Description: An RNA of 207 nucleotides, treated with 2A3 and read out base by base. The 2A3 profile rests on 460 reads. It was measured as part of the RMDB library OK3TST.
[RMDB]
RNA sequence: GGGAACGACUCGAGUAGAGUCGAAAAUUGGGGGGACAGAAACUUGCUCCAUUGCCCAGGCUGGAGUUAAGGGGCGUGAUCUCAGCUCACUGCAACCUCCACCCCUGGGGUUCAAGUAAUUCUUAUGCCCCAGCGUCUUGAGUAGCUGGGAUUACAGCAUCACCAAGGGUUUCGACCCUUGGUGAUGAAAAGAAACAACAACAACAAC
Reactivity to 2A3 in 0.01 (KOAc 150mM, MgCl2 10mM, bicine 150mM(pH8.5), 24C), signal-to-noise 1, nucleotides 027 to 156: u180u020g020g050g000g060g010g000a010c000a040g040a050a090a010c010u020u040g010c000u020c000c030a160u040u060g050c010c010c030a090g150g000c040u010g000g000a090g020u090u220a000a000g010g040g010g060c020g000u000g040a030u000c000u030c020a030g000c040u040c000a120c070u030g000c040a000a130c030c000u020c040c000a040c060c000c000c000u030g000g000g000g030u030u030c070a010a000g040u110a160a110u300u030c000u030u090a100u280g030c000c000c000c000a000g000c090g070u030c060u240u190g120a120g070u090a000g010c000u000g040g000g000a010u000u000a000c000a000g030